[RMDB]
RNA sequence: GGGAACGACUCGAGUAGAGUCGAAAACAGGGCGGAUGACUGACGGGCCAGCUACCUGCCUUCCUGAGCCUGCAGAGAUAAACAGCCUAUCCUCCCUGUGCACACAGGCCCCGAGGGCGGGCAGGUCGAAGAGUCCAAAAUUCGUUUUGGACUCUUCAAAAGAAACAACAACAACAAC
Reactivity to DMS in 0.01 (KOAc 150mM, MgCl2 10mM, bicine 150mM(pH8.5), 24C), signal-to-noise 6, nucleotides 027 to 126: c030a010g010g010g030c130g000g000a020u000g010a060c030u000g000a220c060g010g010g010c010c050a080g010c130u010a060c020c000u000g020c010c000u010u000c050c010u000g000a110g020c010c000u000g020c060a100g000a160g000a140u020a080a080a260c100a030g000c010c010u010a030u010c010c010u000c010c000c010u000g020u000g010c100a070c150a100c180a070g010g000c020c020c020c100g010a090g000g000g010c150g000g010g010c080a010g000g010u030c260
Reactivity to 2A3 in 0.01 (KOAc 150mM, MgCl2 10mM, bicine 150mM(pH8.5), 24C), signal-to-noise 2, nucleotides 027 to 126: c000a010g020g000g000c010g000g000a010u050g050a100c060u040g040a200c010g000g010g010c020c000a010g030c050u090a180c020c010u010g000c000c010u030u060c020c010u030g020a020g000c000c010u010g010c000a020g050a030g010a150u170a230a210a050c060a050g050c020c040u050a030u000c000c000u000c010c010c000u000g010u010g030c000a020c000a010c020a110g200g000c000c000c000c020g060a100g030g040g000c000g010g000g000c010a010g040g020u040c030

Structure probing data (DMS and 2A3) for a 177-nucleotide construct. The 2A3 profile rests on 5,567 reads. The DMS profile rests on 7,214 reads. Conditions: 150 mM KOAc, 10 mM MgCl2 and 150 mM bicine (pH 8.5), 24 C. For 2A3 the reverse transcriptase was SuperScript II with manganese.